[RMDB]
This 177-nucleotide RNA was probed chemically with 2A3 and DMS. Source: RMDB library OK1LIB, as collected in RNAgym. 2A3 adducts were read by reverse transcription with SuperScript II with manganese. The reactions ran in a buffer of 150 mM KOAc, 10 mM MgCl2 and 150 mM bicine (pH 8.5), at 24 C.
RNA sequence: GGGAACGACUCGAGUAGAGUCGAAAAAACGGGUGCAACGCGUGGCGCCGUGGUUGACCACCGACGACAACCCCUAUCCGGUGGUGGUGAACGGGCGGAUCGUCUGGAUCGUCGACGCCUACACCACCUGGGAGUUACCGUUCGCGGUAACUCCCAGAAAAGAAACAACAACAACAAC
Reactivity to 2A3 in 0.01 (KOAc 150mM, MgCl2 10mM, bicine 150mM(pH8.5), 24C), signal-to-noise 3, nucleotides 027 to 126: a000a010c050g000g010g010u070g020c080a040a010c070g070c090g140u130g060g000c040g030c020c020g070u100g090g060u100u050g020a060c010c010a010c000c020g060a090c020g040a040c100a040a180c010c010c000c000u050a070u120c000c020g060g020u040g000g000u050g000g000u010g060a190a090c150g000g020g020c020g020g050a070u030c000g020u000c060u150g210g100a130u220c120g010u000c000g000a050c000g000c000c000u000a040c010a000c010c000a010c000
Reactivity to DMS in 0.01 (KOAc 150mM, MgCl2 10mM, bicine 150mM(pH8.5), 24C), signal-to-noise 2, nucleotides 027 to 126: a050a030c260g000g000g020u000g000c120a080a070c100g010c240g030u000g000g000c020g000c050c030g010u010g000g030u030u010g000a120c010c000a130c010c030g020a100c020g000a090c140a150a140c140c010c000c020u000a020u000c000c040g000g070u080g010g000u000g030g020u020g000a090a040c150g020g030g030c010g010g000a060u020c000g000u000c130u040g010g000a040u000c070g000u000c040g010a040c020g040c010c000u020a280c040a000c000c030a030c060